[RMDB]
RNA sequence: GGGAACGACUCGAGUAGAGUCGAAAACGACGCAGGUUCGCCUGCGUCGCACUACCGAGAAUGCGACUCGGUAUAUUAAAACGCGCCUUCGAAACAAGGCAAAUAAGGCCAGAUUCGUCUGGCCUAAGACGAGAGAAUGUUUCGACAUUCUCUCGUCAAAAGAAACAACAACAACAAC
Reactivity to 2A3 in 0.01 (KOAc 150mM, MgCl2 10mM, bicine 150mM(pH8.5), 24C), signal-to-noise 2, nucleotides 027 to 126: c000g010a000c000g000c000a000g040g010u030u090c110g130c010c000u000g000c000g010u000c000g010c000a040c000u030a010c000c000g000a000g000a100a100u090g010c010g040a040c030u000c000g000g060u010a010u010a010u060u160a010a010a000a000c020g040c030g000c020c000u020u020c070g150a070a020a040c050a040a020g010g000c020a000a030a050u140a020a000g010g000c000c000a000g000a010u020u060c110g060u020c100u000g000g000c010c000u000a000a000
Reactivity to DMS in 0.01 (KOAc 150mM, MgCl2 10mM, bicine 150mM(pH8.5), 24C), signal-to-noise 2, nucleotides 027 to 126: c020g020a030c000g010c030a000g000g030u000u010c260g000c000c010u010g000c020g010u000c000g020c020a090c030u000a010c000c010g000a000g010a030a150u020g020c040g000a080c040u010c000g000g010u000a000u000a000u000u010a030a020a000a020c070g010c050g010c010c010u000u000c080g000a100a100a150c300a050a000g010g000c060a080a080a100u020a110a050g020g020c000c000a020g000a040u000u000c170g010u000c000u000g000g010c020c020u000a020a050
Source information: Structure probing data (2A3 and DMS) for a 177-nucleotide construct. The data come from the RNA Mapping Database (RMDB), library M2PK50. The RNA was probed in 150 mM KOAc, 10 mM MgCl2 and 150 mM bicine (pH 8.5) at 24 C. 2A3 adducts were read by reverse transcription with SuperScript II with manganese.